[RMDB]
RNA sequence: GGGAACGACUCGAGUAGAGUCGAAAACUUUUAGUCUUGUAACUAUUUGUGAUCUAUAUUCCAUUCAGGAUGUGGGUUUUAAGAAUCAGUAUUGUAAUGGAAGUAUCGCAUGUCAAUUCUGCUUGGCGCCAAGAUACUAGUUCGCUAGUAUCUUGGCAAAAGAAACAACAACAACAAC
Reactivity to 2A3 in 0.01 (KOAc 150mM, MgCl2 10mM, bicine 150mM(pH8.5), 24C), signal-to-noise 2, nucleotides 027 to 126: c030u020u110u090u200a040g010u040c040u080u120g040u080a070a040c040u040a110u140u070u060g000u000g010a020u020c040u020a150u070a120u190u070c000c020a010u060u040c010a010g150g010a120u130g300u250g300g040g000u030u000u030u120a250a160g100a050a000u020c020a030g040u070a030u050u030g080u110a000a020u000g040g000a010a060g040u090a010u040c010g000c080a010u060g010u050c030a040a050u090u000c030u020g090c040u030u050g050g000c040
Reactivity to DMS in 0.01 (KOAc 150mM, MgCl2 10mM, bicine 150mM(pH8.5), 24C), signal-to-noise 2, nucleotides 027 to 126: c030u010u020u000u000a080g010u000c050u000u010g010u010a080a050c090u000a030u000u000u000g040u000g010a060u000c120u010a140u010a120u010u000c000c000a030u000u000c080a050g010g010a100u000g030u010g010g010g000u010u010u000u020a080a100g020a020a030u000c010a060g020u000a090u000u000g010u010a010a030u000g010g000a020a040g020u010a020u010c040g000c090a010u000g020u000c120a030a110u000u000c040u020g020c110u000u000g010g010c150

An RNA of 177 nucleotides, treated with 2A3 and DMS and read out base by base. It was measured as part of the RMDB library OK2TRN. The RNA was probed in 150 mM KOAc, 10 mM MgCl2 and 150 mM bicine (pH 8.5) at 24 C.